[RMDB]
RNA sequence: GGGAACGACUCGAGUAGAGUCGAAAAGGGAGGUUGGUGGUGGACGAGCCACUCGCCAACCGGGUCAGGUCCGGAAGGAAGCAGCCCUAACGAGCCACGGCACGGGCCAUCGUGCCAGCCUCCCACCCUUUCUAAAACGGUACGGUUCGCCGUACCGGCAUAUAUCUACGUUCGCGUAGAUAUAUGCAAAAGAAACAACAACAACAAC
Reactivity to 2A3 in 0.01 (KOAc 150mM, MgCl2 10mM, bicine 150mM(pH8.5), 24C), signal-to-noise 2, nucleotides 027 to 156: g000g000g000a030g010g020u020u010g020g040u140g010g010u010g010g010a020c020g000a000g010c010c020a030c010u000c000g010c020c030a080a080c110c070g000g000g000u100c000a000g030g000u010c010c010g040g160a110a090g020g000a010a020g010c010a010g000c000c000c000u000a000a030c020g010a010g030c100c130a090c110g000g000c010a020c020g040g110g130c020c000a010u020c000g070u120g010c000c000a000g010c000c000u000c020c000c000a020c000c000c000u000u050u000c040u050a020a020a020a020c010g000g010u000a000c000g000g080u040u040c220g030c100c000g000u000a000c000c000g000
Notes
Chemical mapping of a 207-nucleotide RNA with 2A3. 2A3 adducts were read by reverse transcription with SuperScript II with manganese. It was measured as part of the RMDB library ARCHII.